[RMDB]
RNA sequence: GGGAACGACUCGAGUAGAGUCGAAAACAGGAGAUUAGCAUAGCUCCAUUCUACUAUGCAGCUAGUCGUCGUUUUCGACGUCUAGGAUAGACCCCUACAGCAGGGUCCAUGAACUGCUGAUUACCGCGUCUCGUAGCGCGGGUUCUGGCUACGUACACAUCCCUAGGGAUUUCGAUCCCUAGGGAUGAAAAGAAACAACAACAACAAC
Reactivity to DMS in 0.01 (KOAc 150mM, MgCl2 10mM, bicine 150mM(pH8.5), 24C), signal-to-noise 2, nucleotides 027 to 156: c000a120g050g010a060g000a150u000u010a130g030c010a010u000a000g010c000u000c080c260a110u000u000c010u000a020c040u000a010u010g020c000a300g010c030u000a020g030u000c010g030u010c020g050u010u010u030u000c010g000a000c010g040u000c020u000a030g030g050a170u010a050g000a200c020c000c010c020u000a170c040a040g010c080a060g000g020g090u000c030c120a080u000g010a060a140c020u000g010c000u010g010a240u010u000a090c020c000g060c030g000u000c030u030c180g070u000a130g000c010g000c020g020g020g000u000u010c040u010g030g000c040u010a070c060g020u010a140c120a150
Reactivity to 2A3 in 0.01 (KOAc 150mM, MgCl2 10mM, bicine 150mM(pH8.5), 24C), signal-to-noise 2, nucleotides 027 to 156: c050a000g010g030a000g000a020u110u120a030g020c020a010u010a020g000c000u000c060c000a060u150u100c020u040a100c000u020a000u040g000c020a020g050c010u000a030g010u040c020g000u000c040g040u060u080u220u300c020g010a000c000g020u000c010u000a000g000g000a000u070a020g040a000c020c000c000c020u030a060c040a040g020c000a020g000g000g030u030c080c050a090u180g100a090a020c020u050g000c010u010g030a130u020u170a120c010c020g010c010g010u040c030u020c200g040u110a010g000c020g030c000g020g020g040u050u010c040u020g050g020c010u050a030c070g020u030a020c050a000
Background: This 207-nucleotide RNA was probed chemically with DMS and 2A3. Conditions: 150 mM KOAc, 10 mM MgCl2 and 150 mM bicine (pH 8.5), 24 C. DMS adducts were read by reverse transcription with MarathonRT. Reactivities are rounded to 0.1 and cut off at 0 and 3. For DMS, 2,677 sequencing reads were counted. 2A3 adducts were read by reverse transcription with SuperScript II with manganese. Values cover nucleotides 27 to 156.